[RMDB]
RNA sequence: GGGAACGACUCGAGUAGAGUCGAAAACGCCGGCGCCGACGGUGCCUCCAAGGUCGACCCUCCAGCUCGUCUCUCCCCGUCGUCACCUACCUCUCUCUGUCACUCGCUCGCUCACUCACUCUUGCGCAAUAGAGCUUUGUUUCGACAAAGCUCUAUUAAAAGAAACAACAACAACAAC
Reactivity to DMS in 0.01 (KOAc 150mM, MgCl2 10mM, bicine 150mM(pH8.5), 24C), signal-to-noise 5, nucleotides 027 to 126: c150g010c030c050g010g000c070g010c040c010g000a080c060g010g030u010g010c020c010u000c040c050a080a110g010g000u000c040g010a120c040c030c010u000c020c050a060g010c080u000c040g000u010c040u000c010u010c040c030c020c040g030u010c030g000u000c030a070c050c020u010a100c060c010u010c020u000c020u000c020u020g020u000c030a050c040u000c040g000c030u010c050g010c030u000c020a050c050u010c040a050c060u010c030u010u000g030c080g010c130
Reactivity to 2A3 in 0.01 (KOAc 150mM, MgCl2 10mM, bicine 150mM(pH8.5), 24C), signal-to-noise 7, nucleotides 027 to 126: c040g020c020c020g030g010c040g010c010c020g060a100c060g030g030u030g040c000c000u040c020c020a070a020g060g020u030c010g030a080c010c000c000u010c020c010a030g010c030u030c030g040u000c020u010c010u020c040c010c000c000g030u040c010g010u020c020a060c050c000u050a060c010c000u030c000u000c010u010c020u040g050u060c010a010c030u020c010g030c000u020c010g020c000u020c010a050c010u030c010a040c020u030c020u050u080g020c060g000c020